[RMDB]
RNA sequence: GGGAACGACUCGAGUAGAGUCGAAAACUAAGCCGUGUGGCAUCAGAGGCACAGAUGUUGUCUUUAGUGAUGUAGUUCUACCUCUCAUUUUGCAAAUGAAAACAACAGCCCACAGGGGUUAAUUGACCUGUUCAAGAUCACACUGGGAGUUAGAGGAUCAUAUAGCGUGAUUCGUCACGCUAUAUGAAAAAGAAACAACAACAACAAC
Reactivity to DMS in 0.01 (KOAc 150mM, MgCl2 10mM, bicine 150mM(pH8.5), 24C), signal-to-noise 4, nucleotides 027 to 156: c070u000a120a210g020c040c040g020u030g030u010g000g030c020a080u000c080a080g020a060g000g050c000a070c050a160g020a200u000g000u000u020g030u000c020u000u000u000a140g030u000g020a090u000g010u000a130g010u010u000c030u010a040c040c010u000c020u000c010a120u000u000u000u010g020c070a070a110a120u000g000a070a080a070a110c060a070a050c030a080g020c020c010c020a040c030a090g010g010g030g030u000u000a010a070u000u000g010a030c030c030u000g000u010u000c100a070a110g010a080u000c030a060c050a090c050u000g010g010g000a100g020u000u000a040g020a120g030g020a210
Reactivity to 2A3 in 0.01 (KOAc 150mM, MgCl2 10mM, bicine 150mM(pH8.5), 24C), signal-to-noise 5, nucleotides 027 to 156: c030u090a050a030g080c020c050g090u090g020u080g130g020c020a020u030c020a010g060a050g020g030c030a010c010a070g180a170u170g040u200u030g020u040c000u030u070u080a130g050u070g030a010u050g040u050a060g060u090u000c030u060a040c010c000u000c010u010c030a040u000u040u090u170g070c050a040a070a100u090g040a050a100a020a000c040a000a020c000a020g040c010c040c010a070c050a070g000g060g000g010u070u110a070a060u120u120g070a060c020c030u040g040u090u060c030a050a020g030a110u050c000a010c000a000c070u040g030g000g000a050g020u010u010a020g000a020g040g000a040